[RMDB]
RNA sequence: GGGAACGACUCGAGUAGAGUCGAAAACACUGCAAACGAAACAGUUUUGUCUUGGUAUUAUUGGCCGAUCAGACCUGUUCCGUCUGCUGUAGUUUUUGACGCAUUCUUGAUCUAUUGGUAACUCAUGAGCCUUACUUGAAUUCGUUCAAGUAAGGCUAAAAGAAACAACAACAACAAC
Reactivity to DMS in 0.01 (KOAc 150mM, MgCl2 10mM, bicine 150mM(pH8.5), 24C), signal-to-noise 4, nucleotides 027 to 126: c000a090c030u000g000c000a010a020a000c010g010a050a000a020c000a020g010u000u000u000u000g020u000c260u000u010g040g010u000a080u010u030a200u030u040g010g010c000c000g020a010u010c030a010g010a010c030c000u000g000u000u000c010c000g040u000c030u000g000c000u010g010u000a060g010u010u000u010u000u000g000a020c020g000c110a200u010u010c010u000u010g000a050u000c050u000a160u020u000g000g010u020a100a080c050u000c060a110u010g010
Reactivity to 2A3 in 0.01 (KOAc 150mM, MgCl2 10mM, bicine 150mM(pH8.5), 24C), signal-to-noise 9, nucleotides 027 to 126: c010a000c010u000g000c000a020a000a000c000g020a010a000a000c000a000g000u000u020u030u040g030u020c110u060u080g020g000u060a090u230u070a150u170u300g270g000c000c000g020a030u060c020a000g000a010c010c000u010g000u010u010c010c000g000u000c010u000g010c010u010g000u030a160g000u010u000u000u000u010g000a000c000g020c110a120u090u040c010u020u040g040a070u020c020u040a100u120u110g090g010u080a100a080c010u020c050a100u140g100